[RMDB]
RNA sequence: GGGAACGACUCGAGUAGAGUCGAAAAGAUAUGGACAGGGCAAGGGUGUGGUUCGGAAACGAACCCAUGAAGCUUGCCUGUCCUAAGUCAAAAGCUUCUUCCCUGAGUUCGCUCAGGGAAGAAGCAACUUAAUAUCAGGGUUCGCCCUGAUAUUAAGAAAAGAAACAACAACAACAAC
Reactivity to DMS in 0.01 (KOAc 150mM, MgCl2 10mM, bicine 150mM(pH8.5), 24C), signal-to-noise 5, nucleotides 027 to 126: g000a040u010a300u000g000g000a010c010a010g010g010g020c010a000a010g010g000g020u000g010u020g030g010u000u000c000g010g000a080a080a180c000g000a010a000c000c000c000a020u000g010a160a170g010c000u000u000g010c000c000u000g010u000c000c000u000a010a070g010u010c040a110a080a130a100g000c000u000u000c000u000u000c000c000c000u010g000a020g010u000u010c220g020c000u000c000a000g000g000g010a000a000g000a000a010g010c000a000a020
Reactivity to 2A3 in 0.01 (KOAc 150mM, MgCl2 10mM, bicine 150mM(pH8.5), 24C), signal-to-noise 3, nucleotides 027 to 126: g000a010u080a030u150g000g000a010c020a040g190g150g180c010a010a000g130g140g020u110g100u300g070g000u020u010c000g020g020a040a060a020c010g000a000a000c000c010c010a010u070g100a080a020g190c010u000u000g000c000c000u000g000u000c000c000u000a060a030g020u000c020a020a000a130a080g000c000u010u000c000u000u000c010c000c000u000g000a030g000u050u300c300g020c110u000c000a000g000g000g000a000a000g000a010a010g010c000a000a000